[RMDB]
RNA sequence: GGGAACGACUCGAGUAGAGUCGAAAACACUUGCUCUGUACUCUCUGAAGCUCUGGAAAACACGCUCUGUUUGGCAUGCAGUUUGACAGGCCCCUGCCGUGUUCCCCUGCUGAGCCUUUACGUGGUGCUAAGGUGGAACGUUCGCGUUCCACCUUAGAAAAGAAACAACAACAACAAC
Reactivity to DMS in 0.01 (KOAc 150mM, MgCl2 10mM, bicine 150mM(pH8.5), 24C), signal-to-noise 2, nucleotides 027 to 126: c100a110c050u010u000g020c020u010c010u000g000u010a070c060u020c060u010c030u000g010a120a150g020c030u000c040u010g010g010a100a060a070a090c120a130c150g020c030u020c040u000g020u010u010u010g010g020c040a030u010g020c030a030g010u020u000u000g000a060c040a100g000g000c020c020c080c040u000g030c050c010g000u000g010u000u010c010c010c000c040u000g010c020u000g030a150g020c050c020u010u020u000a100c050g040u010g010g010u010g010
Chemical mapping of a 177-nucleotide RNA with DMS. DMS adducts were read by reverse transcription with MarathonRT. The RNA was probed in 150 mM KOAc, 10 mM MgCl2 and 150 mM bicine (pH 8.5) at 24 C. It was measured as part of the RMDB library OK2TST.